[RMDB]
RNA sequence: GGGAACGACUCGAGUAGAGUCGAAAACUCGCGCGAACAUCGAGGCGUGGAGCGCGACAUGAAUCAGCCUCAAUUAGAUUAAUGGUCGACAGAUCAGCGGCGAUCAGCGACCCAAUUAGAAGCCGCCACCGGAAGAGGAGACGCUCGACGGACGUCACAGUCAGUAUUUAUUCGUAAAUACUGACUGAAAAGAAACAACAACAACAAC
Reactivity to DMS in 0.01 (KOAc 150mM, MgCl2 10mM, bicine 150mM(pH8.5), 24C), signal-to-noise 2, nucleotides 027 to 156: c030u000c020g040c000g040c040g000a130a130c000a090u000c040g010a060g070g040c030g000u000g000g000a210g020c020g000c030g010a060c120a070u000g020a110a120u010c080a120g000c020c040u000c020a140a110u000u000a090g030a180u010u010a070a120u010g000g000u010c010g020a080c060a130g000a120u000c110a120g040c060g000g020c030g020a050u000c040a090g040c090g030a060c010c010c040a040a040u000u000a040g020a110a090g020c050c010g030c010c040a110c020c030g000g010a060a120g020a090g010g000a160g010a030c040g030c000u010c000g010a130c050g030g010a040c020g010u000c030a200
Reactivity to 2A3 in 0.01 (KOAc 150mM, MgCl2 10mM, bicine 150mM(pH8.5), 24C), signal-to-noise 4, nucleotides 027 to 156: c000u000c000g000c010g050c000g080a280a060c020a050u030c070g020a020g000g000c010g020u020g030g010a040g020c030g010c000g030a030c070a100u230g090a090a130u140c010a040g000c000c000u020c000a000a060u100u100a070g100a140u050u150a090a080u150g000g000u000c020g010a080c070a110g000a020u030c020a010g030c010g020g000c010g000a000u000c040a000g020c000g010a010c000c020c000a020a100u180u130a050g060a210a000g000c010c000g000c000c010a000c010c010g060g010a110a030g020a040g060g030a070g020a040c050g040c100u040c000g060a060c030g010g040a100c020g010u020c020a000
Structure probing data (DMS and 2A3) for a 207-nucleotide construct. The data come from the RNA Mapping Database (RMDB), library OK3TST. The DMS profile rests on 3,447 reads. Conditions: 150 mM KOAc, 10 mM MgCl2 and 150 mM bicine (pH 8.5), 24 C. The 2A3 profile rests on 3,493 reads.